[RMDB]
RNA sequence: GGGAACGACUCGAGUAGAGUCGAAAAGAAAACUGAUGCUACUGUGUCAACGAUCCGUUAUCAGUGCAGGAAAAUGCCUGUUAGCGUAAAAGCAAAACACAAAUCUAUCCAUGCAAGCAUUCACCGCAUCAACAAAGUUCUUCGGAACUUUGUUGAUAAAAGAAACAACAACAACAAC
Reactivity to 2A3 in 0.01 (KOAc 150mM, MgCl2 10mM, bicine 150mM(pH8.5), 24C), signal-to-noise 9, nucleotides 027 to 126: g040a010a080a010a030c070u060g010a030u040g030c010u020a090c050u040g000u020g020u070c050a070a020c060g070a050u030c030c010g010u010u020a020u020c010a010g020u020g240c010a010g030g110a180a130a070a060u060g010c020c000u010g000u020u020a010g000c010g020u100a040a070a060a030g020c050a040a050a080a000c040a000c010a010a100a040u030c030u100a080u010c040c020a030u080g030c040a040a030g020c010a020u040u080c030a030c050c040g050c030
Reactivity to DMS in 0.01 (KOAc 150mM, MgCl2 10mM, bicine 150mM(pH8.5), 24C), signal-to-noise 4, nucleotides 027 to 126: g020a070a050a070a100c050u000g000a060u030g010c020u010a060c140u010g040u010g000u010c070a150a120c140g010a210u010c150c000g010u010u000a020u010c020a020g000u010g010c020a020g000g000a080a080a110a130u010g000c030c010u000g010u000u010a030g000c020g000u020a000a050a070a130g010c100a030a080a110a030c040a010c060a020a070a080u010c090u020a060u010c050c040a050u000g000c080a040a050g010c020a070u010u010c070a090c030c040g010c120